[RMDB]
RNA sequence: GGGAACGACUCGAGUAGAGUCGAAAACAAACUGGCCAGCGCCAUUAAUAGGUAAUAGUCCUGAUAGUGUUGUUACAGUUAGGAAAUUUUUAUGUGAUAAGUAUUUAUGGACAAUACCUUUUUCAAGCAAUUUUAUGAAUAUGGGUGAAUUGACUGACCCUACUACCAGAUUCGUCUGGUAGUAGGGAAAAGAAACAACAACAACAAC
Reactivity to 2A3 in 0.01 (KOAc 150mM, MgCl2 10mM, bicine 150mM(pH8.5), 24C), signal-to-noise 2, nucleotides 027 to 156: c000a000a000a010c000u000g060g000c030c010a090g040c160g090c070c010a060u160u220a070a140u170a080g000g070u020a030a110u060a220g010u000c060c000u020g050a050u070a190g030u070g020u040u010g010u000u050a000c000a000g050u060u130a080g040g060a090a140a110u110u280u110u040u000a080u100g000u000g000a020u010a090a080g020u060a060u150u200u030a010u090g000g000a000c000a020a000u050a020c000c000u100u040u000u020u060c080a140a010g000c000a030a010u040u060u100u200a050u180g010a030a010u150a070u150g010g030g000u020g010a020a040u080u040g000a010c000u000g040a040
Reactivity to DMS in 0.01 (KOAc 150mM, MgCl2 10mM, bicine 150mM(pH8.5), 24C), signal-to-noise 1, nucleotides 027 to 156: c030a090a080a030c120u000g000g000c070c020a190g000c080g000c000c040a050u010u010a030a130u010a040g010g010u040a070a140u000a260g010u020c010c000u000g040a130u000a030g060u010g050u000u010g070u010u000a100c010a120g010u000u010a060g020g020a100a120a120u010u020u000u020u020a110u050g010u000g000a020u000a060a140g010u000a040u000u000u030a120u060g020g010a080c030a020a120u010a010c010c000u000u050u050u000u000c140a030a160g020c090a030a090u000u020u000u020a080u020g010a040a050u000a030u020g010g000g020u000g000a080a070u000u000g020a120c070u000g010a250